[RMDB]
RNA sequence: GGGAACGACUCGAGUAGAGUCGAAAAAACGAGGCACAGGCACGCACGUCCAGAAGUGACCGCGUUAGAUCAGUGCUGGAGCAUGGAUUUCGUUGCUGAUAAUCUGUUCAACGGGCAUCGGGUCAGGACAAACCGUCGUGUUCGCACGACGGUUUGUAAAAGAAACAACAACAACAAC
Reactivity to DMS in 0.01 (KOAc 150mM, MgCl2 10mM, bicine 150mM(pH8.5), 24C), signal-to-noise 1, nucleotides 027 to 126: a040a040c080g010a100g040g010c030a050c050a120g020g030c060a070c070g020c080a070c140g010u000c040c040a140g030a090a110g030u010g010a080c010c010g050c040g020u000u010a150g010a040u020c020a060g020u000g020c010u000g000g010a070g060c060a040u000g030g030a060u000u010u000c030g030u000u010g000c100u010g020a070u020a120a060u000c050u000g020u010u010c010a030a090c040g010g010g000c000a090u000c140g000g020g000u020c040a120g000g020